[RMDB]
RNA sequence: GGGAACGACUCGAGUAGAGUCGAAAAAACUACUUCUUCGGAAGUAGUUAUUGCGUGGGUCUAAUUAGCCCAAGGUGCCAGGUUCGACCCUUGCUGGGCGCAUCACCGACCGAUUCGUCGGUCGGAACCAGGUACGUGUAUUCGUACACGUACCUGGAAAAGAAACAACAACAACAAC
Reactivity to DMS in 0.01 (KOAc 150mM, MgCl2 10mM, bicine 150mM(pH8.5), 24C), signal-to-noise 2, nucleotides 027 to 126: a020a000c000u000a010c000u030u000c000u000u010c220g010g010a020a000g000u010a000g000u010u010a010u000u000g050c120g000u020g000g000g010u000c020u000a080a130u000u010a210g000c000c000c030a050a110g020g000u000g020c020c050a140g000g000u010u000c080g000a120c060c000c020u000u010g020c050u000g000g000g010c040g020c070a050u010c160a150c010c010g030a010c000c020g000a050u000u010c130g020u000c000g010g000u000c000g000g000a030a030
Reactivity to 2A3 in 0.01 (KOAc 150mM, MgCl2 10mM, bicine 150mM(pH8.5), 24C), signal-to-noise 2, nucleotides 027 to 126: a030a000c000u000a000c010u000u020c010u030u000c300g050g000a020a000g000u000a010g010u000u030a120u080u110g030c000g000u070g010g020g000u020c010u050a220a100u160u130a120g000c000c000c000a040a050g100g010u040g020c000c020a030g040g060u040u120c040g060a070c020c010c030u000u090g030c030u030g060g010g010c050g000c010a040u060c060a010c020c000g000a000c020c010g000a030u040u030c230g050u010c000g040g010u000c010g000g000a010a020